[RMDB]
RNA sequence: GGGAACGACUCGAGUAGAGUCGAAAAAUUCGCGGCCGCGCAGGCAUCGCAUCCGAAACUUCCGGCUUCGGCGACAUGAUUUCCGACGAGGCUGGGCGUCCGAUCUGGACACCACAGGGCGAUUGCACCAAUUAUCCCUUUUCGAAGGGAUAAUUGGAAAAGAAACAACAACAACAAC
Reactivity to DMS in 0.01 (KOAc 150mM, MgCl2 10mM, bicine 150mM(pH8.5), 24C), signal-to-noise 6, nucleotides 027 to 126: a120u010u000c060g030c040g010g020c040c040g000c100g020c130a120g010g000c060a040u000c030g010c050a080u010c030c010g010a080a100a100c140u000u000c050c020g010g010c010u000u000c000g000g000c020g010a080c180a080u010g010a180u000u010u010c080c010g010a070c030g000a040g000g010c010u000g010g010g020c150g010u000c010c020g000a130u010c180u010g000g000a020c020a050c060c070a100c090a130g000g000g000c020g000a050u010u010g020c070a230
Reactivity to 2A3 in 0.01 (KOAc 150mM, MgCl2 10mM, bicine 150mM(pH8.5), 24C), signal-to-noise 4, nucleotides 027 to 126: a000u120u070c070g000c020g060g020c040c020g040c030g010c110a040g080g000c010a020u040c000g000c010a060u080c010c010g040a090a080a050c050u130u050c030c000g000g000c000u010u010c000g040g000c010g030a020c030a120u300g050a260u160u170u080c070c010g010a020c000g000a010g000g000c010u020g000g000g020c030g020u000c010c010g040a120u100c100u260g000g020a010c010a030c020c020a060c030a030g020g030g000c010g030a030u040u210g010c030a040